An RNA of 177 nucleotides, treated with 2A3 and DMS and read out base by base. Values are in units of 0.01, from 0 to 300, in steps of 10.

[RMDB]
RNA sequence: GGGAACGACUCGAGUAGAGUCGAAAACACACUGGGCCAAGAGCAGCUGCCAUUGCAGAUUCGAGUCACGUCCUUUUUUCCUUCCUUCUCCUUCUUGGAGUUACAACAGAAGCUGGGGAGGUGAGAGGGUAAUCGAAUGAUUCGUCAUUCGAUUACCAAAAGAAACAACAACAACAAC
Reactivity to 2A3 in 0.01 (KOAc 150mM, MgCl2 10mM, bicine 150mM(pH8.5), 24C), signal-to-noise 8, nucleotides 027 to 126: c060a000c010a010c040u060g000g050g000c010c010a130a010g030a010g040c030a010g000c010u030g000c010c030a130u070u180g010c040a010g040a100u040u050c010g020a010g030u010c010a020c120g050u050c010c000u060u050u010u000u050u070c010c000u010u040c010c000u020u020c020u020c010c000u040u070c020u030u130g030g010a070g040u110u140a100c060a180a000c010a030g040a030a010g030c090u130g000g000g000g000a010g010g020u060g010a110g010a030g010
Reactivity to DMS in 0.01 (KOAc 150mM, MgCl2 10mM, bicine 150mM(pH8.5), 24C), signal-to-noise 4, nucleotides 027 to 126: c070a080c110a040c060u020g000g000g010c010c050a050a040g000a090g020c050a070g020c030u000g000c040c090a080u010u020g020c070a100g000a100u010u010c040g010a030g010u000c010a100c160g000u010c000c010u000u010u000u000u010u000c020c010u020u000c050c000u010u000c030u000c120c010u000u000c030u000u010g020g030a110g010u030u020a070c210a100a110c120a040g000a040a030g010c150u020g020g000g020g000a020g010g010u000g000a040g000a090g010
Annotation: In probing experiments dimethyl sulfate is read out at A N1 and C N3, which are open when not base-paired. The RNA was probed in 150 mM KOAc, 10 mM MgCl2 and 150 mM bicine (pH 8.5) at 24 C.